This 177-nucleotide RNA was probed chemically with 2A3. For 2A3 the reverse transcriptase was SuperScript II with manganese. Values cover nucleotides 27 to 126. The 2A3 profile rests on 279 reads. The reactions ran in a buffer of 150 mM KOAc, 10 mM MgCl2 and 150 mM bicine (pH 8.5), at 24 C.
RNA sequence: GGGAACGACUCGAGUAGAGUCGAAAAUGUAUGCACCUUUACUUAACGAAGCCAUUAAAACAAUAGAUCUUAAUAUGACAGGUGUGGCUAUUGGUUUUUAUAAUUUAAUUAUUAAUGUGGCGGUAUCCCGAGAUACUUCCUUCGGGAAGUAUCUCGGAAAAGAAACAACAACAACAAC
Reactivity to 2A3 in 0.01 (KOAc 150mM, MgCl2 10mM, bicine 150mM(pH8.5), 24C), signal-to-noise 1, nucleotides 027 to 126: u110g010u000a000u000g000c000a040c000c000u190u300u000a080c040u140u120a110a080c020g130a100a040g000c000c000a000u020u080a000a200a160a290c000a060a060u000a020g020a020u060c000u050u120a120a000u130a210u300g020a000c000a000g000g000u000g100u000g030g000c000u000a040u010u020g000g020u000u000u000u300u000a020u270a000a150u000u020u300a050a180u000u000a150u020u050a300a010u100g000u000g020g000c000g000g000u020a060u150c000